[RMDB]
RNA sequence: GGGAACGACUCGAGUAGAGUCGAAAAUUAAAAUGUCUGCAGUCACCAAAGAUGAUAUGGAUAAUCAAGAUUUCAUUACACUAAUUCAGGCAUUUGCCGAAGCGGUUGAAUCACGUGGUAAAGUUACGUAAUCCUCAUUCUUCGGAAUGAGGAUUACAAAAGAAACAACAACAACAAC
Reactivity to DMS in 0.01 (KOAc 150mM, MgCl2 10mM, bicine 150mM(pH8.5), 24C), signal-to-noise 2, nucleotides 027 to 126: u030u080a070a100a080a030u010g020u020c010u010g000c210a010g000u000c110a040c100c110a100a120a090g000a070u020g010a080u020a040u010g000g000a060u000a040a090u090c180a160a110g000a040u000u000u020c020a010u000u000a060c140a030c150u000a050a040u020u000c060a050g010g000c030a070u030u020u020g070c080c020g020a100a090g000c100g000g000u000u000g030a050a140u010c060a090c110g080u000g000g000u100a090a040a020g020u000u000a060c110
Reactivity to 2A3 in 0.01 (KOAc 150mM, MgCl2 10mM, bicine 150mM(pH8.5), 24C), signal-to-noise 2, nucleotides 027 to 126: u010u010a000a000a000a170u020g070u000c000u020g030c070a030g000u020c070a040c040c050a210a010a000g050a070u080g000a020u040a030u130g100g010a070u040a190a100u130c110a020a010g060a110u010u050u030c050a000u080u220a020c130a000c160u160a130a060u050u090c000a000g040g030c030a030u000u000u160g000c000c000g010a030a000g020c000g050g000u080u160g020a100a090u090c000a070c240g000u030g000g000u300a180a180a180g000u030u010a090c070